This 177-nucleotide RNA was probed chemically with 2A3 and DMS. It was measured as part of the RMDB libraries RFM100 and RFMREP. For DMS the reverse transcriptase was MarathonRT. The reactions ran in a buffer of 150 mM KOAc, 10 mM MgCl2 and 150 mM bicine (pH 8.5), at 24 C.
RNA sequence: GGGAACGACUCGAGUAGAGUCGAAAAUUGAGUUGAUUCGCUCUUUCGCAAUAGAGCUUUGAGUCAAAUUACUGUCCGGAAAUUAUAGAGAUGAAGCUCAUUUGGAGCAAUAACAAUUGUUGAAGCUAAAGUCGAUAGUAUUCGUACUAUCGACUUUAAAAGAAACAACAACAACAAC
Reactivity to 2A3 in 0.01 (KOAc 150mM, MgCl2 10mM, bicine 150mM(pH8.5), 24C), signal-to-noise 3, nucleotides 027 to 126: u070u150g030a010g050u010u010g010a030u030u010c000g000c010u000c000u000u050u100c130g090c120a130a090u080a200g000a020g010c000u180u130u190g040a000g020u020c020a000a080a000u090u030a100c050u030g100u140c080c110g020g090a100a020a000u300u200a170u210a130g100a000g080a110u130g180a160a000g000c000u000c010a130u110u020u300g150g000a000g000c070a000a000u190a060a060c070a030a070u000u070g010u020u070g010a050a000g100c050u030
Reactivity to DMS in 0.01 (KOAc 150mM, MgCl2 10mM, bicine 150mM(pH8.5), 24C), signal-to-noise 3, nucleotides 027 to 126: u000u020g010a060g000u000u000g000a010u010u020c040g040c020u000c000u000u000u000c240g040c260a050a100u040a070g000a020g010c050u010u030u000g000a050g020u000c000a020a030a070u000u010a080c120u000g010u000c030c070g030g000a070a040a090u040u030a120u020a070g030a250g000a150u010g000a190a130g020c010u000c010a100u010u060u010g010g010a030g000c040a040a050u030a060a040c110a040a150u000u010g000u010u010g000a090a100g040c170u000
Notes
2A3 adducts were read by reverse transcription with SuperScript II with manganese.